An RNA of 207 nucleotides, treated with DMS and 2A3 and read out base by base. For DMS the reverse transcriptase was MarathonRT. The data come from the RNA Mapping Database (RMDB), library OK3TST. The 2A3 profile rests on 1,548 reads. For DMS, 2,220 sequencing reads were counted.

RNA sequence: GGGAACGACUCGAGUAGAGUCGAAAAGCAUGAAGUGUCAGAUCCGCCGGAGGCGUCUUACAAGACAAUGGGCUUUGCAGCGUACGGCGAAGAGGUUGAAAGUAAAUUCGCCCUCGCCAUCCCCGGAACAAACGCCAUCGUCUUCCAGAUCGAGAAGCUCUGUAAUCAUCUUCGGAUGAUUACAGAGAAAAGAAACAACAACAACAAC
Reactivity to DMS in 0.01 (KOAc 150mM, MgCl2 10mM, bicine 150mM(pH8.5), 24C), signal-to-noise 1, nucleotides 027 to 156: g000c050a090u020g030a020a090g010u000g000u000c000a170g000a120u000c050c010g010c050c050g000g000a150g040g060c030g020u000c030u000u000a110c050a040a170g010a050c030a090a080u000g000g020g010c010u000u010u020g000c030a040g020c020g010u010a080c060g030g010c000g030a060a060g010a170g040g040u000u020g060a020a030a230g000u000a090a130a300u000u000c010g020c000c000c020u000c010g040c020c000a050u010c040c010c020c020g030g000a140a060c040a020a050a060c090g060c010c020a070u000c030g060u000c010u000u000c030c010a070g020a090u000c080g020a110g000a130a130g020
Reactivity to 2A3 in 0.01 (KOAc 150mM, MgCl2 10mM, bicine 150mM(pH8.5), 24C), signal-to-noise 3, nucleotides 027 to 156: g000c030a030u110g070a090a020g050u020g020u100c060a000g020a080u040c080c070g040c070c080g120g000a040g010g030c020g050u010c040u060u170a110c100a060a050g000a020c020a050a130u110g060g010g040c000u020u070u040g040c030a040g030c030g080u140a050c070g020g040c030g020a110a020g060a070g080g060u260u300g100a050a050a010g100u240a070a110a140u010u030c000g010c000c000c000u000c000g000c000c010a060u060c000c010c020c000g040g040a030a080c030a040a010a000c070g010c000c000a030u050c030g020u000c000u020u020c010c010a070g020a110u100c010g010a040g020a100a000g020